Overview: Structure probing data (2A3) for a 207-nucleotide construct. The data come from the RNA Mapping Database (RMDB), library OK3TST. The reactions ran in a buffer of 150 mM KOAc, 10 mM MgCl2 and 150 mM bicine (pH 8.5), at 24 C. The 2A3 profile rests on 758 reads.
RNA sequence: GGGAACGACUCGAGUAGAGUCGAAAACACGCCUGUAAUCCCAGGACUUUGGGAGGCCGAGGAGGGCGGACCACCUGAGGUCGGAAGUUCAAGACCAGCCUGACUAACAUGGAGAAACCCUAUCUCUGCUAAAAAUACAAAAUUAGCCAGGCAUGGUUGUAAUGAUCCUCUUCGGAGGAUCAUUACAAAAAGAAACAACAACAACAAC
Reactivity to 2A3 in 0.01 (KOAc 150mM, MgCl2 10mM, bicine 150mM(pH8.5), 24C), signal-to-noise 1, nucleotides 027 to 156: c000a010c060g080c060c010u040g060u150a070a130u080c030c000c000a050g050g040a020c050u020u080u020g020g020g010a000g000g000c010c000g010a020g000g040a030g010g020g030c010g030g010a120c010c000a000c000c000u010g010a010g000g000u000c020g000g020a060a060g040u050u130c070a100a030g020a020c000c000a000g000c000c000u040g000a010c000u010a080a010c020a140u090g030g000a000g050a020a120a040c020c000c000u030a080u130c000u000c010u010g090c020u030a140a060a000a040a140u190a100c060a010a130a010a030u010u010a010g030c000c010a000g020g000c060a050u000g000g060u000